This 177-nucleotide RNA was probed chemically with DMS and 2A3. For 2A3 the reverse transcriptase was SuperScript II with manganese. The 2A3 profile rests on 30,616 reads. It was measured as part of the RMDB library OK1LIB. Conditions: 150 mM KOAc, 10 mM MgCl2 and 150 mM bicine (pH 8.5), 24 C.
RNA sequence: GGGAACGACUCGAGUAGAGUCGAAAACAAUAUGCAUAGAACACAUGUACAUAAUUUAUGCGUAUUAGGAUGCUCAGUUAUGUAUAUGGGAACUUGAAAAUGUUAAGUUCCUGAAGUUCGAGCAUCAGGUAGACGUUCAUUUCGAUGAGCGUCUACCAAAAGAAACAACAACAACAAC
Reactivity to DMS in 0.01 (KOAc 150mM, MgCl2 10mM, bicine 150mM(pH8.5), 24C), signal-to-noise 7, nucleotides 027 to 126: c070a060a030u010a010u010g000c000a020u000a010g000a030a050c130a130c210a090u020g020u010a020c040a030u010a040a050u000u010u000a010u010g000c010g010u010a040u010u020a080g020g000a010u000g000c000u000c020a070g010u010u010a010u000g000u000a010u000a210u020g000g000g000a010a010c000u000u000g000a050a100a130a090u040g010u010u020a020a010g010u000u000c000c000u000g000a070a090g010u020u010c050g020a010g010c000a000u000c040a040
Reactivity to 2A3 in 0.01 (KOAc 150mM, MgCl2 10mM, bicine 150mM(pH8.5), 24C), signal-to-noise 9, nucleotides 027 to 126: c030a000a030u050a030u080g000c010a010u020a050g080a120a010c080a010c030a120u090g060u130a030c020a040u070a060a060u060u040u030a030u040g010c010g010u030a040u040u090a110g150g000a010u010g000c000u010c020a040g030u060u040a030u050g060u020a020u010a040u140g030g000g010a000a000c000u010u020g100a090a080a090a090u190g080u210u110a020a000g000u000u000c000c000u020g090a100a030g020u050u060c030g000a000g000c000a000u000c010a000